[RMDB]
Source information:
This 177-nucleotide RNA was probed chemically with 2A3 and DMS.

RNA sequence: GGGAACGACUCGAGUAGAGUCGAAAACUUGGGAAGAUGUCAGCGUAUAGCUUCAGUUUAGUCCAAGCGAGGAGCUUUAUCGCCUGGUGCUGCCUUAAGAUCCUAGCCUGACAUGCCUGCAGCAGGCCAUUCAGCACAUAUUCGUAUGUGCUGAAUGAAAAGAAACAACAACAACAAC
Reactivity to 2A3 in 0.01 (KOAc 150mM, MgCl2 10mM, bicine 150mM(pH8.5), 24C), signal-to-noise 7, nucleotides 027 to 126: c010u020u030g030g020g020a140a070g090a220u090g020u040c010a000g000c020g030u040a040u020a100g010c000u020u010c010a040g010u010u060u170a090g020u020c070c040a030a000g010c010g030a220g020g030a020g010c000u040u040u070a160u230c040g040c060c020u020g000g020u030g010c010u010g010c010c000u080u120a020a010g010a020u020c010c010u020a030g020c000c010u040g020a070c010a100u120g050c010c050u070g000c020a050g030c010a000g020g000c010
Reactivity to DMS in 0.01 (KOAc 150mM, MgCl2 10mM, bicine 150mM(pH8.5), 24C), signal-to-noise 9, nucleotides 027 to 126: c020u000u000g010g000g010a080a030g010a070u010g010u000c030a050g000c040g010u010a050u000a040g010c010u000u000c020a130g010u000u000u010a090g010u010c230c130a040a040g000c020g000a120g020g000a030g010c040u000u000u000a040u010c050g010c130c030u000g000g000u000g000c010u000g010c050c020u010u000a030a030g000a150u000c020c010u000a090g010c020c010u000g000a050c070a070u010g010c090c050u000g010c080a110g010c020a030g010g000c030
It was measured as part of the RMDB library OK2TRN.